Chemical mapping of a 207-nucleotide RNA with DMS and 2A3. DMS (dimethyl sulfate) methylates the pairing face of unpaired adenines and cytosines. For DMS the reverse transcriptase was MarathonRT.
[RMDB]
RNA sequence: GGGAACGACUCGAGUAGAGUCGAAAACUAACUGCUUCCUGCUGAAUUGGGGCAUAGUAGGGGUUGUGCAGUUGAGAUUUCCUCGGGAGGGGUGCCUUCGAUGUCAUCAACAUCGGAGUAUGGAAUAGCAGGCCGGUCCAGGGGACCAUGGUAGAUCACUACACUUAUCAUUCGUGAUAAGUGUAGUAAAAGAAACAACAACAACAAC
Reactivity to DMS in 0.01 (KOAc 150mM, MgCl2 10mM, bicine 150mM(pH8.5), 24C), signal-to-noise 3, nucleotides 027 to 156: c050u000a050a070c030u010g010c010u000u000c000c000u000g040c020u010g020a080a180u000u000g030g040g030g020c110a110u000a050g050u000a050g000g030g030g010u000u000g040u000g020c030a070g020u000u000g010a120g000a170u000u010u000c020c030u000c040g030g000g010a120g000g000g040g040u000g000c090c000u010u000c000g020a020u000g000u000c060a210u000c140a160a070c010a010u000c010g020g010a040g000u010a040u010g010g000a070a080u000a070g020c040a050g030g030c070c030g000g010u000c030c020a130g000g000g010g000a050c020c030a050u000g020g040u000a090g010a160u000c060
Reactivity to 2A3 in 0.01 (KOAc 150mM, MgCl2 10mM, bicine 150mM(pH8.5), 24C), signal-to-noise 5, nucleotides 027 to 156: c010u020a000a020c010u020g020c000u130u060c010c010u010g010c030u040g050a130a110u140u160g010g000g020g020c040a060u110a070g050u040a020g000g010g000g030u150u130g100u100g050c030a000g000u040u080g070a070g000a070u080u050u060c010c010u030c010g000g020g010a070g030g020g000g020u050g040c000c000u000u010c010g000a000u010g030u060c070a120u050c050a230a040c000a010u000c000g010g000a010g010u070a100u110g000g030a040a040u030a060g020c030a000g020g040c000c030g010g000u010c020c020a080g050g020g030g020a000c000c030a010u070g020g020u040a030g020a070u170c120